Background:
Chemical mapping of a 177-nucleotide RNA with DMS and 2A3. 2A3 is a SHAPE reagent: it acylates the 2'-hydroxyl of flexible nucleotides of all four kinds. Reactivities are given for positions 27 through 126. The reactions ran in a buffer of 150 mM KOAc, 10 mM MgCl2 and 150 mM bicine (pH 8.5), at 24 C. It was measured as part of the RMDB libraries RFM100 and RFMREP. Reactivities are rounded to 0.1 and cut off at 0 and 3.

RNA sequence: GGGAACGACUCGAGUAGAGUCGAAAAGGGGGGUGUUUCCAGGGGCGGUGGCUGCUUGUAGCCAUGGGAUCUCCAACUGCAUGCCAGAGUAAUGGGGAGGCUUUGACAGCCCAGGUCAUCACAGUGCAUAUGGAAGGUACUUCGGUACCUUCCAUAUAAAAGAAACAACAACAACAAC
Reactivity to DMS in 0.01 (KOAc 150mM, MgCl2 10mM, bicine 150mM(pH8.5), 24C), signal-to-noise 3, nucleotides 027 to 126: g010g030g000g020g000g020u010g030u010u000u010c050c050a130g000g000g010g000c050g010g000u030g010g010c000u000g020c140u000u030g010u020a050g000c010c040a070u030g000g000g010a170u020c030u000c010c030a050a090c030u000g000c080a060u010g040c090c020a040g000a120g000u010a090a090u020g000g010g000g000a070g000g000c020u000u000u030g000a090c140a100g000c040c010c030a080g000g000u010c050a030u010c060a080c090a080g020u020g000c130
Reactivity to 2A3 in 0.01 (KOAc 150mM, MgCl2 10mM, bicine 150mM(pH8.5), 24C), signal-to-noise 3, nucleotides 027 to 126: g050g000g010g000g000g030u040g040u070u130u020c010c000a010g020g040g030g000c070g000g050u080g010g040c010u080g010c060u070u140g090u130a000g000c020c000a070u050g040g030g020a050u010c030u010c010c000a020a050c020u030g030c030a050u090g070c090c050a030g000a020g060u150a190a050u080g010g030g000g000a080g050g000c000u110u060u180g080a060c030a010g000c010c010c000a010g070g000u020c010a010u030c010a030c050a040g050u090g050c040